[RMDB]
The record gives the reactivity of an RNA of 177 nucleotides to 2A3 and DMS. The RNA was probed in 150 mM KOAc, 10 mM MgCl2 and 150 mM bicine (pH 8.5) at 24 C.
RNA sequence: GGGAACGACUCGAGUAGAGUCGAAAACGAGAAAGGGACUUUAGUGGAAAGGAAAGUAAGCCUUGAAAGUGACGGACUUUACCGAACCGAACUCAUUUCUCUUCCUCCAAGACCAAUUUCAGGAUUGUCUUAUCUCGAACUUCGGUUCGAGAUAAGAAAAAGAAACAACAACAACAAC
Reactivity to 2A3 in 0.01 (KOAc 150mM, MgCl2 10mM, bicine 150mM(pH8.5), 24C), signal-to-noise 1, nucleotides 027 to 126: c080g010a000g040a000a000a010g020g020g010a010c030u080u060u040a060g050u120g060g000a100a100a040g010g000a040a030a000g030u030a030a000g010c020c030u030u090g140a190a090a050g080u130g030a040c020g020g030a010c000u050u000u110a300c010c000g000a030a020c000c000g020a000a020c000u000c010a060u000u010u020c020u010c000u010u020c010c020u000c000c010a070a020g030a050c030c040a060a230u140u120u150c110a120g130g060a120u110u230g040
Reactivity to DMS in 0.01 (KOAc 150mM, MgCl2 10mM, bicine 150mM(pH8.5), 24C), signal-to-noise 2, nucleotides 027 to 126: c250g000a040g010a030a000a020g010g010g000a050c070u010u000u010a060g050u000g030g010a060a080a190g000g010a070a050a010g000u000a020a050g000c010c010u000u000g030a120a140a140g000u000g000a020c070g000g010a010c030u000u000u000a140c000c000g000a130a220c060c000g000a100a090c040u000c070a050u000u000u000c000u000c010u010u000c030c000u010c030c110a030a040g000a190c030c040a100a090u000u000u010c110a140g010g020a130u000u000g000
The data come from the RNA Mapping Database (RMDB), library OK2TST. The 2A3 profile rests on 1,272 reads. For 2A3 the reverse transcriptase was SuperScript II with manganese.